[RMDB]
RNA sequence: GGGAACGACUCGAGUAGAGUCGAAAACAUGGAGUCUUCGGACUCCAUGCACUACCGAAAAAAUGCCUCGGUAUAAAAGGCAAACCCUUGGAAACAAGGGAACGAUGUCACGAUUCGUCGUGACAAAAUCACCAAAUUUGUUCGCAAAUUUGGUGAUAAAAGAAACAACAACAACAAC
Reactivity to DMS in 0.01 (KOAc 150mM, MgCl2 10mM, bicine 150mM(pH8.5), 24C), signal-to-noise 3, nucleotides 027 to 126: c010a010u000g000g000a030g000u010c000u010u030c180g040g010a010c010u000c000c000a000u000g010c050a150c050u000a030c010c000g020a000a020a050a110a100a090u000g010c000c000u000c000g000g000u000a110u010a020a020a090a020g000g020c010a030a080a160c000c000c000u000u000g010g000a180a080a120c000a020a020g010g010g010a020a020c240g000a150u000g000u000c010a000c010g000a020u000u010c180g030u000c000g000u000g010a010c000a000a000a090
Reactivity to 2A3 in 0.01 (KOAc 150mM, MgCl2 10mM, bicine 150mM(pH8.5), 24C), signal-to-noise 3, nucleotides 027 to 126: c000a010u000g000g000a000g000u000c020u080u070c270g090g020a000c000u000c000c000a000u000g010c010a020c010u040a000c000c000g020a100a020a030a000a010a030u050g000c010c000u010c010g010g000u050a040u150a230a060a010a010g000g000c000a020a020a160c010c000c000u000u000g020g010a040a030a010c010a000a000g010g000g030a010a020c030g070a070u090g000u010c010a000c000g010a010u030u050c160g070u000c000g000u090g010a000c000a000a000a000
Notes:
Source: RMDB library M2PK50, as collected in RNAgym. This 177-nucleotide RNA was probed chemically with DMS and 2A3. The 2A3 profile rests on 6,623 reads. 2A3 adducts were read by reverse transcription with SuperScript II with manganese. The reactions ran in a buffer of 150 mM KOAc, 10 mM MgCl2 and 150 mM bicine (pH 8.5), at 24 C. Values cover nucleotides 27 to 126.